This 177-nucleotide RNA was probed chemically with DMS and 2A3. It was measured as part of the RMDB library VIROID. Conditions: 150 mM KOAc, 10 mM MgCl2 and 150 mM bicine (pH 8.5), 24 C. Values cover nucleotides 27 to 126.

RNA sequence: GGGAACGACUCGAGUAGAGUCGAAAACGAGAAGAGAGUAAAUAGAGGAGAGAGCUUACCUGGGUCCUGGCAGCGCUGCAACGGAAUUCAGGGCGUUGGCCCCGGUGGAGUUCCGAUGAGCACCGGGCAGUAUCUGUAAGUUCGCUUACAGAUACUGAAAAGAAACAACAACAACAAC
Reactivity to DMS in 0.01 (KOAc 150mM, MgCl2 10mM, bicine 150mM(pH8.5), 24C), signal-to-noise 6, nucleotides 027 to 126: c070g000a080g010a060a040g010a050g010a060g010u010a040a070a100u010a080g010a070g000g010a080g010a070g010a040g010c080u000u000a080c060c040u000g010g000g010u010c040c040u000g010g020c110a100g000c120g010c050u000g010c050a060a120c040g000g000a040a050u000u000c040a090g000g000g010c040g000u010u010g010g010c080c000c010c070g010g020u000g000g000a070g010u000u000c010c010g000a080u010g010a100g010c010a110c020c020g000g000g000
Reactivity to 2A3 in 0.01 (KOAc 150mM, MgCl2 10mM, bicine 150mM(pH8.5), 24C), signal-to-noise 4, nucleotides 027 to 126: c050g000a020g040a080a030g050a010g010a000g040u140a030a080a200u180a090g040a020g020g020a030g000a000g000a000g010c020u050u060a060c020c010u020g040g000g050u030c000c020u010g050g000c030a070g040c050g000c070u120g050c020a060a010c020g020g050a020a000u070u060c010a040g000g000g020c030g060u090u120g170g030c020c000c000c000g100g050u110g050g010a010g010u040u000c000c020g030a070u080g030a010g000c010a000c020c000g000g020g000